Conditions: 150 mM KOAc, 10 mM MgCl2 and 150 mM bicine (pH 8.5), 24 C. This 177-nucleotide RNA was probed chemically with 2A3 and DMS. The DMS profile rests on 1,838 reads. The data come from the RNA Mapping Database (RMDB), library OK2TRN.

[RMDB]
RNA sequence: GGGAACGACUCGAGUAGAGUCGAAAAGUUGAACAAACAGAAAGUGGAGUUGGAGGAGCUCUGGUCCGCCCGCAAGUUUCGCGCCGAUCUCAUACUGCGUUUGCGCUACUUUGAGCGUGACGCCAGAACCCACAGACAAAUUCGUUUGUCUGUGGGUAAAAGAAACAACAACAACAAC
Reactivity to 2A3 in 0.01 (KOAc 150mM, MgCl2 10mM, bicine 150mM(pH8.5), 24C), signal-to-noise 2, nucleotides 027 to 126: g000u020u020g010a020a040c100a080a110a020c030a080g200a050a140a030g100u050g020g000a070g040u060u060g110g040a090g000g070a060g030c020u000c000u070g060g060u090c050c020g000c010c030c010g040c000a030a030g000u000u060u080c050g020c020g030c000c030g060a100u090c050u050c040a030u080a160c030u020g010c010g020u060u090u200g010c010g020c000u090a100c110u240u140u260g050a020g000c010g050u030g010a000c020g020c020c000a000g000a020
Reactivity to DMS in 0.01 (KOAc 150mM, MgCl2 10mM, bicine 150mM(pH8.5), 24C), signal-to-noise 2, nucleotides 027 to 126: g010u000u010g000a110a070c150a100a040a070c030a070g010a090a130a090g010u000g000g010a140g010u010u000g010g000a110g020g000a100g010c070u000c090u000g000g010u020c060c060g010c050c020c050g020c150a030a060g010u000u000u000c070g000c070g000c010c000g000a080u000c030u000c060a130u000a130c080u000g000c010g030u000u020u020g050c040g000c000u020a120c240u000u000u000g020a050g000c010g000u000g000a030c010g000c040c210a060g000a070